[RMDB]
RNA sequence: GGGAACGACUCGAGUAGAGUCGAAAAAAAGCUAAGCACAUUGUCUAUGUAGGAGAUCCAGCACAGUUGCCAGCUCCUAGGACUUUGUUGACUAGAGGCACAUUGGAACCAGAAAAUUUCAAUAGUGAUAUCAACGCGUUCGCGCGUUGAAAAAGAAACAACAACAACAAC
Reactivity to DMS in 0.01 (KOAc 150mM, MgCl2 10mM, bicine 150mM(pH8.5), 24C), signal-to-noise 3, nucleotides 027 to 129: a000a000a000g010c060u040a000a030g030c000a030c010a040u030u000g010u020c000u050a160u030g110u020a000g010g020a000g020a120u000c110c120a130g040c050a090c300a080g060u090u000g010c030c130a000g020c080u000c010c000u000a060g000g030a000c070u030u000u000g020u040u000g020a030c070u020a030g000a290g030g060c020a010c050a020u030u030g010g000a050a020c090c070a160g020a190a050a120a200u050u050u000c020a020a000u010a100g000u000g010a030u020a080
Reactivity to 2A3 in 0.01 (KOAc 150mM, MgCl2 10mM, bicine 150mM(pH8.5), 24C), signal-to-noise 2, nucleotides 027 to 129: a000a010a000g050c030u090a020a020g000c020a000c000a000u030u010g010u000c010u050a230u200g170u010a020g000g000a010g000a020u040c040c000a000g020c020a080c010a150g150u120u010g010c000c000a050g000c000u000c010c000u020a000g000g020a020c000u040u010u000g060u080u080g030a100c000u000a000g030a010g000g000c000a010c000a020u040u050g050g000a000a040c050c040a060g190a020a110a000a060u050u050u030c010a040a020u060a040g030u020g060a040u020a040
An RNA of 170 nucleotides, treated with DMS and 2A3 and read out base by base.
For 2A3 the reverse transcriptase was SuperScript II with manganese.
The reactions ran in a buffer of 150 mM KOAc, 10 mM MgCl2 and 150 mM bicine (pH 8.5), at 24 C.
For DMS the reverse transcriptase was MarathonRT.
Source: RMDB library 15KLIB, as collected in RNAgym.